[RMDB]
RNA sequence: GGGAACGACUCGAGUAGAGUCGAAAAUUGCUCAGGCAGCGUAACGCUGCUUGAAAGACCACAUGAAAGUCCUGGCGGGUUAAGCGCCGGCAGGCGGGGUUCGGAGGCGCCUGGCAACAGAAGCCUCAUUACAUGGAAGACUUCGGUCUUCCAUGAACUAUUGAAGUACGUUCGCGUACUUCAAUAGAAAAGAAACAACAACAACAAC
Reactivity to 2A3 in 0.01 (KOAc 150mM, MgCl2 10mM, bicine 150mM(pH8.5), 24C), signal-to-noise 2, nucleotides 027 to 156: u100u060g010c010u030c030a020g010g000c000a000g000c000g080u070a170a050c230g000c000u000g040c000u000u010g000a010a030a000g020a010c020c050a010c040a180u210g220a170a060a090g300u020c020c000u090g050g070c040g040g000g010u060u060a130a040g070c120g030c080c020g200g000c000a000g000g010c000g020g000g020g000u130u300c160g100g000a000g000g000c000g000c010c010u070g200g000c000a030a000c010a000g000a010a000g000c010c010u000c000a000u000u010a050c000a010u000g000g000a010a000g000a000c000u050u050c210g030g050u010c000u010u000c000c020a000u010g000a000a000
Chemical mapping of a 207-nucleotide RNA with 2A3.
For 2A3, 776 sequencing reads were counted.
High 2A3 reactivity points to a flexible backbone, as in loops and unpaired stretches.
The reactions ran in a buffer of 150 mM KOAc, 10 mM MgCl2 and 150 mM bicine (pH 8.5), at 24 C.